This 177-nucleotide RNA was probed chemically with DMS. The reactions ran in a buffer of 150 mM KOAc, 10 mM MgCl2 and 150 mM bicine (pH 8.5), at 24 C. It was measured as part of the RMDB library M2PK90. Reactivities are given for positions 27 through 126. For DMS the reverse transcriptase was MarathonRT.

[RMDB]
RNA sequence: GGGAACGACUCGAGUAGAGUCGAAAAUUAAACAUGGUUACCAUAUUCUUAGGCACAAGGUAGCCAUGAGUGCCUUAGAAAAUAUAAAAGCUGAGCGUUAGGAAAAACCUAAUGCUCAGCAAAAAAAUCAUCAUCUUAUCUUCGGAUAAGAUGAUGAAAAAGAAACAACAACAACAAC
Reactivity to DMS in 0.01 (KOAc 150mM, MgCl2 10mM, bicine 150mM(pH8.5), 24C), signal-to-noise 1, nucleotides 027 to 126: u020u000a060a080a300c010a000u000g000g000u000u000a020c000c000a190u010a150u000u010c070u000u000a100g000g040c090a010c160a040a080g010g010u000a040g000c010c030a030u010g000a070g000u000g000c000c000u010u000a120g010a060a040a070a000u010a100u020a140a040a100a080g020c010u000g000a000g010c000g000u000u000a000g000g010a140a130a030a140a050c020c000u000a000a000u000g000c000u010c000a010g000c010a000a000a020a040a030a030a030